[RMDB]
RNA sequence: GGGAACGACUCGAGUAGAGUCGAAAAGUCAUGCCUUCGGGCAUGACAGGUACCGAGAGGUACCAAAUAGCGUACAGCGGACUCAGACUGUACGCUAAGUAAGUGUGUGUUCAAUAAGGUCCAAUUGAACACACACUCCGUUGGACCAAGAGUGCGAGGCUAAAUAAAAUUUCGAUUUUAUUUAGCCAAAAGAAACAACAACAACAAC
Reactivity to 2A3 in 0.01 (KOAc 150mM, MgCl2 10mM, bicine 150mM(pH8.5), 24C), signal-to-noise 3, nucleotides 027 to 156: g000u000c010a010u000g010c010c000u040u080c230g030g010g020c000a000u000g000a000c000a000g000g010u000a000c000c010g030a060g000a020g050g010u010a010c000c000a000a070a030u040a010g010c000g000u000a000c000a000g010c020g060g080a150c060u050c130a040g040a230c010u010g000u000a000c010g000c000u000a030a000g100u090a040a020g000u000g000u000g000u000g000u000u000c010a030a010u110a130a120g110g030u030c020c020a020a030u020u000g010a000a000c010a000c010a000c000a000c010u000c000c010g080u050u100g040g000a050c020c050a040a050g050a020g050u090g060c040g020a060
Reactivity to DMS in 0.01 (KOAc 150mM, MgCl2 10mM, bicine 150mM(pH8.5), 24C), signal-to-noise 2, nucleotides 027 to 156: g000u000c000a010u000g000c000c000u000u000c300g060g020g000c010a000u010g010a000c000a040g020g020u010a020c000c000g020a280g000a300g030g020u000a020c000c000a030a060a120u000a020g020c000g030u000a000c010a030g030c030g040g010a150c100u000c100a220g010a050c000u000g000u000a000c010g000c000u000a010a040g030u000a060a040g040u000g050u000g000u000g010u000u000c020a030a020u010a060a050g020g000u010c080c030a220a120u000u000g000a030a020c010a000c010a000c020a000c000u000c030c070g050u000u000g010g000a060c050c020a090a100g020a210g020u000g010c060g000a300

About this RNA:
The record gives the reactivity of an RNA of 207 nucleotides to 2A3 and DMS. For DMS, 4,269 sequencing reads were counted. For 2A3 the reverse transcriptase was SuperScript II with manganese. For DMS the reverse transcriptase was MarathonRT.